[RMDB]
RNA sequence: GGGAACGACUCGAGUAGAGUCGAAAAGAUUCUGGCUAAGACCUCUCUCUGCUUUUGGACAAAUGGUGCCUAACAGAGCUGUGUGACAGAAAAAGGUGAGAUCAUUUUUAGCAGAUGCCAGCCAACGUGAGAAGGGUUGACUGAUAUGACAAAGUCAGUAUCCACUAGGGUUCGCCCUAGUGGAUACAAAAGAAACAACAACAACAAC
Reactivity to 2A3 in 0.01 (KOAc 150mM, MgCl2 10mM, bicine 150mM(pH8.5), 24C), signal-to-noise 1, nucleotides 027 to 156: g050a050u100u040c020u080g020g000c040u140a100a040g060a140c000c000u000c000u000c000u010c010u040g030c000u110u130u070u180g070g010a050c050a070a260a060u090g050g030u250g050c000c030u030a130a060c010a070g050a010g020c010u090g020u050g070u150g040a080c010a120g090a100a060a070a000a000g000g030u120g060a120g000a100u040c020a040u020u070u010u080u090a010g040c000a000g020a040u070g030c040c010a000g010c000c000a030a030c020g080u190g020a030g010a030a090g000g000g040u030u010g000a010c010u020g020a030u140a100u290g040a010c030a020a010a010g000u030c010a010

Chemical mapping of a 207-nucleotide RNA with 2A3. Values are in units of 0.01, from 0 to 300, in steps of 10. Values cover nucleotides 27 to 156.